The data come from the RNA Mapping Database (RMDB), library TTRINS. Chemical mapping of a 177-nucleotide RNA with DMS and 2A3. The 2A3 profile rests on 20,423 reads. Conditions: 150 mM KOAc, 10 mM MgCl2 and 150 mM bicine (pH 8.5), 24 C.

[RMDB]
RNA sequence: GGGAACGACUCGAGUAGAGUCGAAAAGAUAUGGAGACGCGUAAAGGCUGAUGACCAUGUAUGGCGUAGUAUGUCGGAAACGACAUAUCAAGCCAUACAUGCAAGGCCUUUGAUCGUCUCCUAAGUCCUAGAUCUUAUGGUUCGCCAUAAGAUCUAGAAAAGAAACAACAACAACAAC
Reactivity to DMS in 0.01 (KOAc 150mM, MgCl2 10mM, bicine 150mM(pH8.5), 24C), signal-to-noise 8, nucleotides 027 to 126: g010a090u010a300u000g010g000a020g010a010c010g020c300g020u010a020a010a010g010g010c000u000g000a090u020g010a190c300c000a010u000g000u000a010u000g000g010c000g010u010a280g010u000a000u000g010u010c000g000g010a090a080a170c010g010a010c000a010u010a000u000c030a300a300g010c010c000a000u000a000c000a000u000g000c030a040a050g010g000c000c000u000u000u000g010a070u000c020g010u000c000u000c000c000u000a020a080g010u000c030
Reactivity to 2A3 in 0.01 (KOAc 150mM, MgCl2 10mM, bicine 150mM(pH8.5), 24C), signal-to-noise 4, nucleotides 027 to 126: g040a030u130a080u230g000g010a000g000a010c010g040c070g110u180a020a000a000g010g030c030u050g060a300u160g030a080c060c000a000u010g010u000a000u010g000g000c000g010u000a010g000u000a010u000g010u000c000g040g010a050a080a090c010g000a000c000a000u010a000u030c010a010a000g020c000c000a000u000a000c000a000u000g000c000a040a110g010g010c000c000u000u000u000g020a020u010c000g000u000c000u000c000c000u000a040a010g000u010c000